Overview:
An RNA of 177 nucleotides, treated with DMS and 2A3 and read out base by base. Conditions: 150 mM KOAc, 10 mM MgCl2 and 150 mM bicine (pH 8.5), 24 C. The 2A3 profile rests on 38,484 reads. It was measured as part of the RMDB library TTRDES.
[RMDB]
RNA sequence: GGGAACGACUCGAGUAGAGUCGAAAAGAUAUGGAUGGAUUCGAGACAUGAAGUAUCAUCGGAAACGAUGAUGCUUCAACAGCUCGAUCCAUCCUAAGUCAAAAGUUUUCGAGUUCGCUCGAAAACAUCAUUCUCAUUAGUUCGCUAAUGAGAAUGAAAAAGAAACAACAACAACAAC
Reactivity to DMS in 0.01 (KOAc 150mM, MgCl2 10mM, bicine 150mM(pH8.5), 24C), signal-to-noise 8, nucleotides 027 to 126: g000a010u000a080u010g000g000a020u000g000g010a020u010u010c020g010a020g010a030c150a170u020g010a030a010g010u000a000u000c000a000u000c000g010g000a030a020a040c000g010a020u000g000a000u000g010c000u000u000c000a040a050c220a150g000c000u000c000g000a030u000c000c000a000u000c000c000u000a000a060g000u000c010a130a110a130a120g010u000u000u000u000c000g000a020g020u000u010c290g020c000u000c000g000a010a000a000a010c010a130
Reactivity to 2A3 in 0.01 (KOAc 150mM, MgCl2 10mM, bicine 150mM(pH8.5), 24C), signal-to-noise 8, nucleotides 027 to 126: g010a000u020a000u050g000g000a000u000g010g020a030u300u300c030g010a000g000a020c280a300u300g000a020a010g000u020a000u000c000a000u000c000g000g010a010a010a010c000g000a000u000g000a000u000g000c000u000u000c000a010a000c000a000g000c000u000c010g000a000u000c000c000a000u000c000c000u000a000a000g000u000c010a020a010a090a160g010u010u000u000u010c010g000a020g000u070u150c300g110c100u010c010g000a000a000a000a010c000a020
The DMS profile rests on 27,651 reads.